[RMDB]
RNA sequence: GGGAACGACUCGAGUAGAGUCGAAAAGAUAUGGAGGUAGCUUUUGACGCUCCAAUGGUCGGAAACGACCAUAACGAGCGAUAAGCUACCCUCCUAAGUCAAAGAUACAGGGUUCGCCCUGUAUCAAUCUCUGUGUUGUGUUCGCACAACACAGAGAAAAAGAAACAACAACAACAAC
Reactivity to DMS in 0.01 (KOAc 150mM, MgCl2 10mM, bicine 150mM(pH8.5), 24C), signal-to-noise 2, nucleotides 027 to 126: g010a060u000a300u000g000g000a020g000g030u000a000g030c010u000u000u000u000g020a120c170g020c020u030c000c160a190a020u000g000g000u000c000g000g030a070a040a200c020g000a010c000c000a000u000a060a100c250g010a000g000c000g000a050u010a000a010g020c000u000a000c130c030c020u000c000c010u020a020a060g000u000c020a090a130a090g000a010u000a000c020a020g000g010g020u010u020c300g020c010c020c000u000g010u000a000u000c000a070a080
Reactivity to 2A3 in 0.01 (KOAc 150mM, MgCl2 10mM, bicine 150mM(pH8.5), 24C), signal-to-noise 1, nucleotides 027 to 126: g020a010u050a020u120g000g000a000g040g000u030a020g000c040u150u090u060u280g280a190c100g010c000u030c000c020a010a030u000g010g000u000c000g020g000a000a030a120c010g010a010c010c010a000u010a010a000c030g020a010g000c090g140a150u000a040a000g000c000u000a040c000c010c020u000c000c000u030a050a020g050u060c030a110a000a210g000a000u000a000c000a010g090g000g000u040u130c260g170c000c000c000u000g000u010a000u010c000a000a030
Annotation:
Chemical mapping of a 177-nucleotide RNA with DMS and 2A3. It was measured as part of the RMDB library TTRDEL. The RNA was probed in 150 mM KOAc, 10 mM MgCl2 and 150 mM bicine (pH 8.5) at 24 C. Values cover nucleotides 27 to 126. For 2A3, 2,003 sequencing reads were counted.